[RMDB]
The record gives the reactivity of an RNA of 177 nucleotides to 2A3 and DMS. Source: RMDB library OK2TST, as collected in RNAgym. For 2A3 the reverse transcriptase was SuperScript II with manganese. The reactions ran in a buffer of 150 mM KOAc, 10 mM MgCl2 and 150 mM bicine (pH 8.5), at 24 C. The 2A3 profile rests on 5,037 reads.
RNA sequence: GGGAACGACUCGAGUAGAGUCGAAAACGAUUUGCCAAGCGCUUGCGCGUGCUGAGACUGCUAUGACGAAUCCAGUCGUCAUCAUGUGUGGGUGGAGUGCAGCCCAUUCGAGGGUGCGUGCGCCUCCCAUAGGACGUUGGUUCGCCAACGUCCUAUGAAAAGAAACAACAACAACAAC
Reactivity to 2A3 in 0.01 (KOAc 150mM, MgCl2 10mM, bicine 150mM(pH8.5), 24C), signal-to-noise 3, nucleotides 027 to 126: c030g040a080u090u050u150g040c010c030a080a030g050c020g020c040u040u100g000c020g000c020g030u030g010c000u000g010a020g010a050c020u040g020c060u100a070u160g050a040c070g060a060a070u050c040c030a040g080u030c030g110u020c010a020u020c000a050u090g040u000g010u060g050g000g010u040g000g050a040g030u100g020c010a020g020c000c000c010a050u110u150c120g050a240g040g000g000u050g030c060g040u040g020c030g040c000c000u000c010c000
Reactivity to DMS in 0.01 (KOAc 150mM, MgCl2 10mM, bicine 150mM(pH8.5), 24C), signal-to-noise 6, nucleotides 027 to 126: c120g010a130u010u010u000g020c030c070a120a130g010c030g030c020u000u010g010c040g020c040g030u000g010c040u000g010a140g000a050c070u010g010c130u000a050u010g010a050c100g010a070a090u010c180c080a070g010u000c000g010u000c010a040u000c110a050u010g010u000g020u000g010g010g020u000g010g000a090g010u000g000c010a270g000c010c010c010a140u010u020c160g020a170g010g010g010u000g010c070g010u000g000c060g010c030c020u010c010c020